[RMDB]
This 177-nucleotide RNA was probed chemically with 2A3 and DMS. 2A3 adducts were read by reverse transcription with SuperScript II with manganese. The data come from the RNA Mapping Database (RMDB), library TTRDES.
RNA sequence: GGGAACGACUCGAGUAGAGUCGAAAAGAUAUGGAUCACCCAAGGGAGCUCAGGUAUCGGAAACGAUACCGAGCAUCGAUCUUGGUGAUCCUAAGUCAAACUCGAUCAUGCUUCGGCAUGAUCGAGACCGGAGAGAUAUCUUCGGAUAUCUCUCCGGAAAAGAAACAACAACAACAAC
Reactivity to 2A3 in 0.01 (KOAc 150mM, MgCl2 10mM, bicine 150mM(pH8.5), 24C), signal-to-noise 2, nucleotides 027 to 126: g010a000u010a010u100g000g000a000u020c000a020c070c140c080a030a020g070g020g060a250g000c020u020c120a270g030g000u020a010u000c000g020g020a020a010a010c000g000a000u010a000c010c000g010a010g010c000a030u130c120g100a100u040c000u030u000g000g020u000g010a000u000c000c000u010a020a010g020u020c000a050a010a190c000u000c000g000a000u020c000a000u000g020c000u090u090c300g210g000c030a000u020g010a010u000c010g000a020g010a030
Reactivity to DMS in 0.01 (KOAc 150mM, MgCl2 10mM, bicine 150mM(pH8.5), 24C), signal-to-noise 2, nucleotides 027 to 126: g000a000u000a080u000g000g000a000u000c000a030c240c050c190a040a030g000g010g020a160g000c000u000c000a080g040g000u000a010u000c010g050g010a060a020a070c010g040a020u000a000c000c000g000a020g000c010a130u000c300g010a130u010c000u000u000g010g010u000g010a020u010c000c000u000a020a070g000u000c000a120a120a170c000u010c000g000a010u000c000a000u000g010c000u020u030c300g050g000c000a000u000g000a000u000c000g000a020g000a040